[RMDB]
RNA sequence: GGGAACGACUCGAGUAGAGUCGAAAAGAACUUUGGCCGGCUCGGAAUAGAAUCAGGGGGUGCAAACUGCCCACUGGCAGAAAGGAUUAUAGCAAAUGCGUACCCUAUUGUAAUACAGCCCGGCCAACAUAGACUACUCUAUUCGUAGAGUAGUCAAGUGGUAUAGACUCUUCGGAGUCUAUACCACAAAAGAAACAACAACAACAAC
Reactivity to 2A3 in 0.01 (KOAc 150mM, MgCl2 10mM, bicine 150mM(pH8.5), 24C), signal-to-noise 2, nucleotides 027 to 156: g040a020a000c090u110u010u000g000g000c010c000g020g010c050u050c140g000g050a100a100u070a120g030a000a030u170c090a140g020g000g000g000g000u070g050c010a030a090a070c000u030g000c000c000c020a160c210u120g000g000c000a000g120a070a060a070g160g070a070u210u170a120u290a120g140c080a050a030a140u110g010c000g010u050a070c000c000c000u030a100u080u140g110u020a000a080u040a110c010a010g000c000c060c070g000g000c000c010a040a000c000a020u070a010g010a000c000u000a000c000u010c000u000a020u040u050c070g070u080a000g000a000g000u000a000g000u000c000a000a000